[RMDB]
RNA sequence: GGGAACGACUCGAGUAGAGUCGAAAAACGUGCACCUGACCUGUGUGAACGGGUACUUCGGAGAGCGUCACUGCGACAUGGCGUCUCGUUACGGCGCAAAGGUGGAGAGACUGGAGAGGCCCUGGGGUAUGAUGAUAACAUUCGUGUUAUCAUCAUAAAAAGAAACAACAACAACAAC
Reactivity to 2A3 in 0.01 (KOAc 150mM, MgCl2 10mM, bicine 150mM(pH8.5), 24C), signal-to-noise 8, nucleotides 027 to 126: a000c040g040u060g010c030a030c040c010u040g050a050c010c010u030g010u010g020u040g130a090a010c020g000g000g030u060a100c040u060u080c040g050g010a060g000a000g050c010g020u020c020a020c070u110g020c030g050a040c040a090u080g060g010c010g060u030c020u010c040g070u080u100a060c090g010g010c020g000c000a110a070a040g060g010u060g010g020a060g000a000g010a020c040u050g030g020a070g010a030g050g010c010c020c020u020g000g000g010g010
Reactivity to DMS in 0.01 (KOAc 150mM, MgCl2 10mM, bicine 150mM(pH8.5), 24C), signal-to-noise 9, nucleotides 027 to 126: a080c110g020u000g010c050a080c030c030u000g010a070c040c020u000g010u000g010u010g010a160a040c050g000g010g020u000a060c110u000u000c080g010g000a160g000a080g010c030g010u000c030a060c090u000g000c070g010a060c100a160u000g000g010c030g000u000c020u000c070g010u010u010a120c120g000g010c030g010c050a050a070a060g010g020u000g000g010a110g010a100g000a070c060u000g000g010a080g010a120g010g000c040c020c020u000g010g000g000g010